[RMDB]
RNA sequence: GGGAACGACUCGAGUAGAGUCGAAAAAAUAAUCUUCAGGGCAGGGAGAAAUUCCCGAUCGGCGGUAAAGUCCGCGAGCCGAACGAAAAAGGUUUGGCAGGAACCGGUGAGAUUCCGGUACCGACAGCAAAGCCUCAACACUUCGGUGUUGAGGCAAACAACUUAAUACGUUCGCGUAUUAAGUUGUAAAAGAAACAACAACAACAAC
Reactivity to DMS in 0.01 (KOAc 150mM, MgCl2 10mM, bicine 150mM(pH8.5), 24C), signal-to-noise 2, nucleotides 027 to 156: a030a110u010a080a060u000c060u020u000c010a080g030g030g050c050a070g000g020g010a080g000a030a100a160u000u000c050c010c000g020a080u020c000g030g010c000g000g010u000a060a240a060g040u020c010c010g000c000g030a180g000c000c000g050a030a060c000g010a030a190a090a170a180g070g000u000u000u010g030g020c000a070g060g010a030a010c010c010g070g000u020g000a300g000a300u000u000c020c000g010g020u000a040c000c000g000a090c070a040g020c050a080a060a140g030c000c000u000c000a000a020c010a000c010u000u010c300g040g020u000g030u000u010g000a010g020g010c000a000a010
Conditions: 150 mM KOAc, 10 mM MgCl2 and 150 mM bicine (pH 8.5), 24 C.
An RNA of 207 nucleotides, treated with DMS and read out base by base.
For DMS the reverse transcriptase was MarathonRT.
Values cover nucleotides 27 to 156.